Structure probing data (2A3 and DMS) for a 177-nucleotide construct. DMS adducts were read by reverse transcription with MarathonRT. Source: RMDB libraries RFM100 and RFMREP, as collected in RNAgym. High 2A3 reactivity points to a flexible backbone, as in loops and unpaired stretches. The reactions ran in a buffer of 150 mM KOAc, 10 mM MgCl2 and 150 mM bicine (pH 8.5), at 24 C.
RNA sequence: GGGAACGACUCGAGUAGAGUCGAAAAAGCUCCAGCUACGGCUGGAGCAACCCCACACUGACGUGUGGGGCCGUCUUUUUGACUGUAACAAGGGGUCUGCCCGUGAGCCGACGUUACGACGUCGGCAUCGUUGUAGACAGUUCGCUGUCUACAACGAAAAAGAAACAACAACAACAAC
Reactivity to 2A3 in 0.01 (KOAc 150mM, MgCl2 10mM, bicine 150mM(pH8.5), 24C), signal-to-noise 5, nucleotides 027 to 126: a000g000c000u000c000c000a000g000c000u020a040c300g110g000c000u000g000g000a000g000c000a000a000c000c000c020c010a010c000a000c010u300g120a100c220g020u010g000u000g010g000g020g000c010c010g150u110c080u010u010u010u000u020g020a010c010u030g090u240a140a060c040a100a070g070g010g000g020u030c040u100g050c000c000c010g060u110g070a020g010c000c000g010a010c010g000u020u050a090c300g010a010c010g080u020c010g000g000c000a010
Reactivity to DMS in 0.01 (KOAc 150mM, MgCl2 10mM, bicine 150mM(pH8.5), 24C), signal-to-noise 1, nucleotides 027 to 126: a060g020c000u000c000c000a000g020c000u000a150c200g040g030c000u000g000g000a000g120c010a000a060c020c000c000c000a000c040a000c020u000g030a180c300g080u000g040u000g000g030g040g090c070c030g030u060c060u000u000u110u000u000g000a050c000u030g040u000a070a040c090a120a300g000g020g000g000u000c040u020g040c020c010c020g030u050g040a180g040c000c000g020a020c000g000u000u050a140c180g000a050c010g040u000c070g000g060c160a000